RNA sequence: GGGAACGACUCGAGUAGAGUCGAAAACAGUGGGGCAGCGGCGAUGGCCAUACAUUGUCUGGAAUGUGGAUGGGCUCCCCUUGCUGCCGGCGACAAUGUGGGCAAAGUUUGCGUACCAGACGCUGGGUCGCCUACGUACUUUCGAGUACGUAGGCGAAAAAGAAACAACAACAACAAC
Reactivity to DMS in 0.01 (KOAc 150mM, MgCl2 10mM, bicine 150mM(pH8.5), 24C), signal-to-noise 2, nucleotides 027 to 126: c040a070g030u000g000g020g000g020c070a080g040c050g010g010c080g000a110u010g000g000c030c030a060u000a070c040a030u000u020g000u010c070u020g030g010a090a050u000g020u000g010g000a060u010g010g000g040c040u050c030c090c020c040u000u000g020c030u000g000c040c040g010g010c060g010a090c080a010a030u030g020u000g020g000g010c090a070a060a170g020u020u000u000g040c030g020u000a120c040c040a110g000a120c070g020c050u020g020g000g000